[RMDB]
RNA sequence: GGGAACGACUCGAGUAGAGUCGAAAACAUCAUCCCGAUUUGGACCGGCAUCGCAUCGCAUCCGAAAGAGGCGAGGUCCCCGAUCAGGGAGGGCGAGAGCGCCACGCUGUCGUUGAGCUUGUCGGUGGUCGCCGGCGAGAACACGCGAUCGAGGCCGCAAGAAUUCCGGAUUCGUCCGGAAUUCUUGAAAAGAAACAACAACAACAAC
Reactivity to 2A3 in 0.01 (KOAc 150mM, MgCl2 10mM, bicine 150mM(pH8.5), 24C), signal-to-noise 1, nucleotides 027 to 156: c020a160u140c010a090u000c030c000c000g080a230u140u010u220g120g020a050c100c000g000g000c010a020u000c040g070c080a000u000c000g010c020a100u020c040c000g090a070a130a010g140a060g010g010c020g040a040g020g140u030c030c000c000c000g040a190u160c070a070g090g000g000a070g100g010g000c010g020a080g000a010g030c040g060c100c040a090c100g040c000u030g020u190c000g040u050u110g060a050g050c040u000u030g000u010c000g020g070u120g030g050u100c150g000c000c000g010g000c000g070a150g010a020a010c090a010c270g000c010g000a030u000c000g030a110g010g000c050c030g000